[RMDB]
RNA sequence: GGGAACGACUCGAGUAGAGUCGAAAAAUUCGGUAAGACCGGUGAUUGCACGAACAUCGGAGUUAUUUACCAAAUAGAAUGCUUAACGUGCAACGCCAUUUAUAUUGGAGAAGCUGGAAGGAUGCUGCAUAGGCGAUACGUUCGCGUAUCGCCUAUGAAAAGAAACAACAACAACAAC
Reactivity to 2A3 in 0.01 (KOAc 150mM, MgCl2 10mM, bicine 150mM(pH8.5), 24C), signal-to-noise 3, nucleotides 027 to 126: a010u080u050c040g010g010u110a130a020g050a100c050c010g000g000u030g050a300u050u110g020c010a000c030g050a170a000c040a150u050c000g040g000a050g020u110u110a120u130u110u130a040c020c000a000a090a000u280a020g200a140a000u100g030c100u140u100a120a000c000g010u000g050c000a000a000c030g000c030c000a000u020u140u120a240u070a030u050u190g070g050a070g060a110a050g090c000u040g000g090a030a000g030g010a040u100g020c070u050g000
Reactivity to DMS in 0.01 (KOAc 150mM, MgCl2 10mM, bicine 150mM(pH8.5), 24C), signal-to-noise 2, nucleotides 027 to 126: a110u000u020c070g020g010u000a020a030g000a100c090c000g000g020u000g000a210u000u030g000c000a030c050g060a110a120c030a020u000c050g000g000a240g010u020u010a100u020u030u000a040c080c070a050a100a060u010a100g000a110a000u020g000c020u000u030a060a120c010g050u030g010c000a100a110c200g000c000c010a050u030u010u040a050u020a100u060u030g000g000a050g000a040a050g000c000u000g000g030a070a020g020g000a020u030g000c050u000g020